Chemical mapping of a 207-nucleotide RNA with 2A3 and DMS. It was measured as part of the RMDB library VIROID.

[RMDB]
RNA sequence: GGGAACGACUCGAGUAGAGUCGAAAAGUGGGGGAGGAUGUUACGGACAAAUUCCGUAACCGUGUGAGGCCAACAUCGAAGAUGCGUACCAAGCUGCGUUUCUACCUGUGUGGGUAGGGGCGGCUUAGCGGAUUAGGGCGUUCUGCCCCAGUGGCACCAGAUAUCAAAUGUUCGCAUUUGAUAUCUGAAAAGAAACAACAACAACAAC
Reactivity to 2A3 in 0.01 (KOAc 150mM, MgCl2 10mM, bicine 150mM(pH8.5), 24C), signal-to-noise 4, nucleotides 027 to 156: g140u100g010g000g010g010g000a030g030g010a050u070g000u000u000a010c000g000g000a030c100a110a230a100u200u000c000c000g000u000a000a000c000c020g070u100g080u100g120a070g010g010c020c010a050a050c020a140u160c100g050a120a050g050a050u110g090c010g020u040a150c040c050a050a000g010c030u040g020c010g070u020u110u050c000u010a010c010c000u130g050u110g150u300g270g000g000u010a010g000g000g030g000c020g000g000c000u010u010a000g000c010g010g030a020u050u190a110g080g000g000c010g030u100u010c030u120g030c010c000c000c010a030g030u090g060g010c040a020c030
Reactivity to DMS in 0.01 (KOAc 150mM, MgCl2 10mM, bicine 150mM(pH8.5), 24C), signal-to-noise 2, nucleotides 027 to 156: g060u010g000g030g010g020g030a080g020g010a120u000g010u000u020a010c000g020g000a100c050a140a090a200u000u000c000c010g000u000a010a020c010c090g020u000g020u000g000a130g010g020c040c010a070a050c050a060u010c050g000a150a170g010a080u000g000c050g030u000a120c060c020a040a060g010c000u000g020c020g000u000u000u000c000u000a000c010c010u000g020u020g050u020g030g000g040u000a010g020g010g010g040c010g020g010c000u000u000a040g010c040g010g000a170u000u000a100g000g020g020c000g050u000u000c040u010g050c010c000c000c010a030g010u000g010g000c010a170c060